[RMDB]
Chemical mapping of a 177-nucleotide RNA with DMS and 2A3. It was measured as part of the RMDB library OK2TST. 2A3 adducts were read by reverse transcription with SuperScript II with manganese.

RNA sequence: GGGAACGACUCGAGUAGAGUCGAAAAGGCAGAUUCAUUCCUUGAUAGUGAAUAACUCUAUGCUUGGCAGCAGGCUGGUACAAUGUAUCUCUUAACCACGCAUUAACAUAGUGUGCUGCUUUUUUACUAGAGCUAAGUGGUUCGCCACUUAGCUCUAAAAAGAAACAACAACAACAAC
Reactivity to DMS in 0.01 (KOAc 150mM, MgCl2 10mM, bicine 150mM(pH8.5), 24C), signal-to-noise 1, nucleotides 027 to 126: g000g000c020a050g010a120u010u000c140a040u000u000c070c030u000u000g010a150u000a020g000u000g000a020a030u010a100a130c030u000c050u000a050u000g020c060u020u000g000g020c020a050g030c110a050g010g030c010u000g010g010u000a070c060a100a090u000g020u000a040u020c070u000c100u050u000a130a080c140c080a050c090g020c010a060u010u000a080a080c070a030u010a020g030u000g000u000g010c020u000g000c000u000u020u000u000u000u000a070c120
Reactivity to 2A3 in 0.01 (KOAc 150mM, MgCl2 10mM, bicine 150mM(pH8.5), 24C), signal-to-noise 2, nucleotides 027 to 126: g000g000c000a000g000a020u010u030c010a020u040u060c060c010u010u100g180a180u140a050g040u050g070a080a000u050a150a010c020u000c050u090a080u110g020c080u080u080g020g000c000a030g020c020a030g090g070c010u040g000g000u020a050c080a150a090u090g030u030a050u080c130u000c000u140u110a080a060c030c000a000c130g000c000a010u100u020a020a060c020a050u060a010g040u120g090u020g060c000u000g050c000u110u000u010u010u020u030a110c070
About this RNA:
DMS adducts were read by reverse transcription with MarathonRT. For 2A3, 1,010 sequencing reads were counted.